[RMDB]
The record gives the reactivity of an RNA of 207 nucleotides to 2A3 and DMS.
RNA sequence: GGGAACGACUCGAGUAGAGUCGAAAAAAUGGAAUUCACUUAUGGGUGAGUCGAUCCUAAGGUUUGGGUUAACUCUCUCUAAUAAGGUUACUAGGUCAUUGGAUCGAAAGUGAAGGUGGCUUUAACACUAGUGACUUUAUAGGCCGAAAGGGAAGCGCUAAUCGAUAUAGUUCGCUAUAUCGAUUAGAAAAGAAACAACAACAACAAC
Reactivity to 2A3 in 0.01 (KOAc 150mM, MgCl2 10mM, bicine 150mM(pH8.5), 24C), signal-to-noise 7, nucleotides 027 to 156: a000a010u180g040g030a050a060u120u060c030a030c050u090u110a100u250g130g010g000u050g010a010g010u020c020g010a050u020c000c020u050a090a070g150g010u060u150u140g020g010g000u050u040a040a030c020u020c000u000c000u000c010u070a080a110u020a080a020g000g000u000u000a000c010u010a010g030g030u000c010a010u020u020g000g000a000u010c010g030a040a030a010g010u000g010a000a020g000g020u000g000g000c000u120u130u160a130a040c080a010c030u000a010g000u000g020a000c000u000u010u030a050u030a030g060g000c060c030g050a070a020a020g050g010g010a050a020g030c030g010
Reactivity to DMS in 0.01 (KOAc 150mM, MgCl2 10mM, bicine 150mM(pH8.5), 24C), signal-to-noise 3, nucleotides 027 to 156: a060a070u000g020g020a110a090u000u000c010a040c030u000u000a120u000g010g030g040u000g010a050g030u000c020g020a060u000c000c010u000a140a220g020g020u010u000u010g020g020g030u010u000a030a050c000u000c020u000c010u010c040u010a120a040u010a030a030g010g030u000u000a080c030u000a030g010g030u000c020a040u000u000g010g010a120u000c000g010a100a050a160g020u000g010a300a140g010g030u010g000g000c070u000u000u010a070a120c160a300c040u000a050g020u010g000a030c010u000u000u000a050u000a090g000g010c030c030g010a090a070a080g010g000g000a080a090g020c080g010

For DMS, 6,496 sequencing reads were counted. The reactions ran in a buffer of 150 mM KOAc, 10 mM MgCl2 and 150 mM bicine (pH 8.5), at 24 C. It was measured as part of the RMDB library PDB130.